[RMDB]
RNA sequence: GGGAACGACUCGAGUAGAGUCGAAAAACCUUAUUUUGAGAAGCUGAGGGAUUUGGCCCAUAGAAGCUUCAGCAACCGACUUUUAAUAGCACGGUGCUAAUACCAACGAGCAACUCGAAUGAUAAGUAAAACGUUGACAAGUUCGCUUGUCAACGAACUAAUAAAUUUCGUUCGCGAAAUUUAUUAGAAAAGAAACAACAACAACAAC
Reactivity to DMS in 0.01 (KOAc 150mM, MgCl2 10mM, bicine 150mM(pH8.5), 24C), signal-to-noise 1, nucleotides 027 to 156: a080c060c000u020u000a110u000u000u000u000g010a120g000a070a300g010c130u000g020a110g030g030g000a110u000u000u020g050g000c000c050c000a200u010a140g020a090a110g000c020u020u000c010a000g000c000a030a020c020c000g000a060c010u020u000u000u000a140a100u000a020g020c000a020c020g030g040u000g000c010u000a060a060u000a020c010c000a070a090c050g040a110g070c060a100a250c030u000c000g020a040a070u000g010a150u000a070a120g020u010a040a060a090a100c020g000u000u000g000a030c030a050a000g030u000u000c300g080c000u010u000g000u000c000a010a000c000g020a020a110
Reactivity to 2A3 in 0.01 (KOAc 150mM, MgCl2 10mM, bicine 150mM(pH8.5), 24C), signal-to-noise 2, nucleotides 027 to 156: a010c080c000u140u100a290u060u130u090u140g050a040g000a020a000g000c020u010g020a010g060g030g010a050u040u010u040g070g000c010c020c000a070u140a150g020a010a000g010c000u020u010c020a000g040c000a000a020c000c010g010a020c040u050u090u130u240a190a190u210a120g010c000a010c020g000g000u000g000c000u000a010a010u060a090c020c000a040a000c030g030a030g010c100a150a150c040u030c070g050a070a090u090g080a070u080a180a000g050u070a040a180a040a040c040g010u000u000g010a010c000a000a010g030u040u140c150g050c070u000u000g020u020c000a000a000c000g000a000a010
Chemical mapping of a 207-nucleotide RNA with DMS and 2A3. In probing experiments dimethyl sulfate is read out at A N1 and C N3, which are open when not base-paired. The DMS profile rests on 1,859 reads. It was measured as part of the RMDB library M2RFPK. Conditions: 150 mM KOAc, 10 mM MgCl2 and 150 mM bicine (pH 8.5), 24 C. For DMS the reverse transcriptase was MarathonRT.